[RMDB]
RNA sequence: GGGAACGACUCGAGUAGAGUCGAAAAUAUGGGCAGUUCGCUGCCCAUACGAGCGGAGUCCGGCACUAUGUGCCCGCAGCGUUGGUGCGUAGCCGCGGUGCAGAGACCAAGCCUUCGGGCUUGGUAACACUCGACUCAUUUUCGAAUGAGUCGAGUGAAAAGAAACAACAACAACAAC
Reactivity to DMS in 0.01 (KOAc 150mM, MgCl2 10mM, bicine 150mM(pH8.5), 24C), signal-to-noise 2, nucleotides 027 to 126: u000a010u010g000g010g000c000a000g000u000u020c280g010c000u000g000c000c000c000a010u000a010c050g000a080g030c040g010g000a170g000u000c030c030g010g000c010a040c050u000a090u010g020u000g010c010c030c090g000c050a020g010c050g030u000u010g040g010u000g000c150g000u020a190g000c010c020g000c050g000g000u000g010c040a100g000a130g000a020c000c000a000a000g010c000c000u000u010c180g020g010g020c010u000u000g000g000u000a020a050
Reactivity to 2A3 in 0.01 (KOAc 150mM, MgCl2 10mM, bicine 150mM(pH8.5), 24C), signal-to-noise 2, nucleotides 027 to 126: u070a020u010g000g010g010c000a010g030u050u070c120g060c100u010g000c010c000c000a000u010a020c000g000a030g000c030g000g080a070g080u040c040c030g020g000c050a020c030u230a110u280g030u030g010c030c020c010g010c010a070g070c000g050u170u300g020g000u050g000c050g120u200a010g030c010c000g000c010g000g070u010g000c020a030g050a000g040a120c000c000a000a020g000c000c020u030u080c190g080g010g000c000u000u000g000g000u000a010a000
An RNA of 177 nucleotides, treated with DMS and 2A3 and read out base by base. The 2A3 profile rests on 2,066 reads. The RNA was probed in 150 mM KOAc, 10 mM MgCl2 and 150 mM bicine (pH 8.5) at 24 C. It was measured as part of the RMDB library M2PK50. The DMS profile rests on 2,852 reads.